RNA sequence: GGGAACGACUCGAGUAGAGUCGAAAAGGUGCCAAAGAUGACUUACAUAAUUGGGUACCUAGAAAUAUUCUAUGGUAUUACAGUAAUGAUGAAAAAUACAAAUUAGAACACAUUUUAGAUCCUAUUGAGUUAAAUAAAUCAGAGUCAAGACCAAACACAAUGUGUUAUAGUUCGCUAUAACACAUUGAAAAGAAACAACAACAACAAC
Reactivity to DMS in 0.01 (KOAc 150mM, MgCl2 10mM, bicine 150mM(pH8.5), 24C), signal-to-noise 4, nucleotides 027 to 156: g000g050u000g020c030c020a060a100a160g010a160u010g010a130c060u010u010a100c050a120u010a080a100u000u010g010g010g050u000a010c010c010u000a020g000a060a160a200u010a100u000u000c020u000a030u000g010g030u000a010u000u000a120c030a090g010u000a100a120u010g020a140u010g000a030a120a090a080a090u000a060c020a050a070a110u000u000a070g010a060a060c020a060c060a090u000u000u000u010a050g010a030u000c010c010u010a080u000u010g010a110g000u000u000a060a060a130u000a060a080a070u010c070a100g010a110g030u000c020a040a040g000a060c050c010a060a080a070c120a140
Reactivity to 2A3 in 0.01 (KOAc 150mM, MgCl2 10mM, bicine 150mM(pH8.5), 24C), signal-to-noise 9, nucleotides 027 to 156: g040g010u030g020c020c000a080a060a030g080a070u090g030a050c030u080u170a050c060a100u180a100a140u180u060g040g000g000u010a010c000c000u000a010g050a000a120a010u190a080u110u010c020u020a030u130g020g000u020a020u050u070a150c030a040g060u080a120a060u080g070a020u050g080a070a080a030a030a020u100a040c050a020a160a040u110u060a040g050a100a020c040a000c010a090u040u040u050u080a030g010a030u030c000c000u040a070u070u110g040a030g040u070u120a080a090a060u100a040a100a020u120c040a030g010a010g080u010c010a020a000g030a040c040c000a040a030a030c100a010